[RMDB]
Overview: Chemical mapping of a 177-nucleotide RNA with 2A3.

RNA sequence: GGGAACGACUCGAGUAGAGUCGAAAAGAAGUGGCAGGGACAUGCCCCACAAGCUCGUUCUAGCAACAUAUGUUUGGCUAGUUCGAGCGAUUAGUCUGGAGGAGCGUCCUCUCGCCUCUUGACGAGAGGCCCAUGGUCAGUUCGCUGACCAUGGGCCAAAAGAAACAACAACAACAAC
Reactivity to 2A3 in 0.01 (KOAc 150mM, MgCl2 10mM, bicine 150mM(pH8.5), 24C), signal-to-noise 2, nucleotides 027 to 126: g170a060a050g030u000g030g000c000a000g010g070g000a010c050a030u150g050c000c000c000c000a080c000a020a050g000c000u000c000g010u020u000c000u010a010g000c000a010a010c060a120u290a170u220g150u190u080u000g110g010c000u000a010g050u000u000c000g000a000g000c000g000a000u060u050a060g040u030c170u050g090g000a170g010g000a030g080c000g000u050c000c010u010c000u020c100g000c000c000u020c080u010u040g000a000c140g000a000g000a030

The RNA was probed in 150 mM KOAc, 10 mM MgCl2 and 150 mM bicine (pH 8.5) at 24 C.